[RMDB]
RNA sequence: GGGAACGACUCGAGUAGAGUCGAAAAGCUGAUAAAUUAAACACUAAAGGAACAGAUUUUGCAUACACACAUGGAUUACCAGACAAAUAUGGUGUAGUUAGAGAAGCUAAGAAAGUCGAUACCAUGGUGAUCCUCAAUCAUCCUGAGGAUAUACCUGUCUAUAGUGUUACUUCGGUAACACUAUAGAAAAAGAAACAACAACAACAAC
Reactivity to DMS in 0.01 (KOAc 150mM, MgCl2 10mM, bicine 150mM(pH8.5), 24C), signal-to-noise 6, nucleotides 027 to 156: g000c040u000g010a090u000a070a090a120u010u010a080a110a110c030a090c050u010a050a070a160g010g030a090a110c060a090g000a140u000u000u000u000g000c030a110u000a090c050a090c080a110c050a120u000g010g010a130u000u000a050c030c020a090g010a150c060a030a080a090u010a060u000g020g020u000g030u000a050g000u000u000a050g010a120g010a080a070g010c030u000a060a090g010a080a040a100g010u000c050g020a150u000a070c080c030a060u000g010g030u000g010a060u000c010c000u000c010a030a130u010c150a110u010c230c100u000g010a040g010g020a020u000a070u000a020c010c000u000g010
Reactivity to 2A3 in 0.01 (KOAc 150mM, MgCl2 10mM, bicine 150mM(pH8.5), 24C), signal-to-noise 9, nucleotides 027 to 156: g020c030u040g070a090u130a220a120a080u220u140a100a170a010c060a030c070u100a100a070a060g050g000a070a040c040a050g040a070u050u060u080u160g030c030a030u070a090c020a010c020a000c010a080u060g040g010a050u090u100a070c030c030a020g050a080c040a060a110a030u120a070u090g020g010u030g020u040a060g020u030u050a000g010a010g000a080a010g020c020u050a070a020g040a080a050a010g080u040c020g030a020u040a160c010c050a020u070g000g000u010g010a010u000c000c000u000c000a020a070u050c020a040u070c020c070u020g000a000g010g000a000u040a010u020a050c010c000u030g030